[RMDB]
RNA sequence: GGGAACGACUCGAGUAGAGUCGAAAAGCUGACGGAUAACGUGGUGUUAUAGAUAUAUAUCUUACGUCAUAAUAAUAUCAUAGCUCGGGAAAUAUAUAUAUCGUAGCUAAAUUCUUAUCGUCAGCGAAUACUACCAUACUUUCGAGUAUGGUAGUAUAAAAGAAACAACAACAACAAC
Reactivity to 2A3 in 0.01 (KOAc 150mM, MgCl2 10mM, bicine 150mM(pH8.5), 24C), signal-to-noise 8, nucleotides 027 to 126: g000c000u010g000a000c020g170g030a030u010a050a010c050g010u020g010g050u030g020u060u060a070u090a140g010a010u020a010u000a010u010a020u110c030u040u060a020c010g010u000c050a000u040a140a030u090a060a040u070a070u130c070a060u080a070g020c060u040c050g050g020g090a030a180a010u180a010u000a000u000a000u000a000u090c000g010u030a000g000c000u030a050a110a100u170u060c020u020u030a020u040c000g000u000c010a000g000c000g000a000
Reactivity to DMS in 0.01 (KOAc 150mM, MgCl2 10mM, bicine 150mM(pH8.5), 24C), signal-to-noise 8, nucleotides 027 to 126: g010c000u000g000a020c000g010g020a030u000a010a020c280g010u000g010g010u010g010u000u000a020u000a070g010a030u000a060u000a030u000a050u010c080u000u000a080c040g010u000c040a080u000a090a080u000a070a080u010a160u000c050a120u000a070g010c090u000c030g000g010g010a070a120a080u010a050u000a050u000a030u000a050u010c000g000u000a010g010c010u000a090a080a070u010u000c120u000u000a010u000c000g000u000c010a000g010c000g010a080